Chemical mapping of a 207-nucleotide RNA with 2A3 and DMS.
The DMS profile rests on 6,213 reads.
For 2A3, 1,833 sequencing reads were counted.
2A3 adducts were read by reverse transcription with SuperScript II with manganese.
The RNA was probed in 150 mM KOAc, 10 mM MgCl2 and 150 mM bicine (pH 8.5) at 24 C.
Reactivities are given for positions 27 through 156.
RNA sequence: GGGAACGACUCGAGUAGAGUCGAAAAGUAAGGAUACAGGCACACAUUGGCACCAUCAUGGGCAAGCUGGGACGAAUCUUCACCCUGCUUUGGUAACCCCCUUCUAACUGAUAGCCAGUUAAGACAGCAGGUGCAUGAUUCCGCCUUCCUAUGUUAAGAUAUUAGGAUGAUUCGUCAUCCUAAUAUCAAAAGAAACAACAACAACAAC
Reactivity to 2A3 in 0.01 (KOAc 150mM, MgCl2 10mM, bicine 150mM(pH8.5), 24C), signal-to-noise 3, nucleotides 027 to 156: g050u080a040a050g010g030a030u110a190c140a060g010g040c020a010c000a000c030a150u070u170g090g000c050a030c030c000a050u150c020a030u100g020g000g000c020a050a070g000c020u040g000g040g020a030c010g010a060a100u060c030u110u080c070a100c020c000c000u000g000c050u060u100u120g120g050u170a140a150c020c030c010c010c010u030u000c010u010a000a020c000u010g050a160u120a080g110c090c000a000g000u000u000a060a050g020a020c040a010g020c020a020g000g000u020g000c010a000u050g010a030u020u020c060c030g040c020c000u010u000c000c010u040a050u090g090u040u030a130a000
Reactivity to DMS in 0.01 (KOAc 150mM, MgCl2 10mM, bicine 150mM(pH8.5), 24C), signal-to-noise 3, nucleotides 027 to 156: g020u010a100a100g000g010a130u000a050c080a040g020g010c050a080c070a090c050a140u010u010g010g040c100a120c030c040a120u000c090a080u010g010g030g020c060a030a060g000c030u020g020g000g000a150c070g010a060a080u000c040u000u010c050a040c010c010c020u010g020c060u000u010u000g040g000u000a090a140c030c030c010c030c020u000u010c090u000a030a040c030u000g010a240u010a090g020c130c010a030g010u000u000a030a070g010a040c080a060g000c060a040g010g050u000g000c020a050u010g020a120u000u000c010c030g020c020c010u010u020c020c010u000a050u000g010u000u000a100a190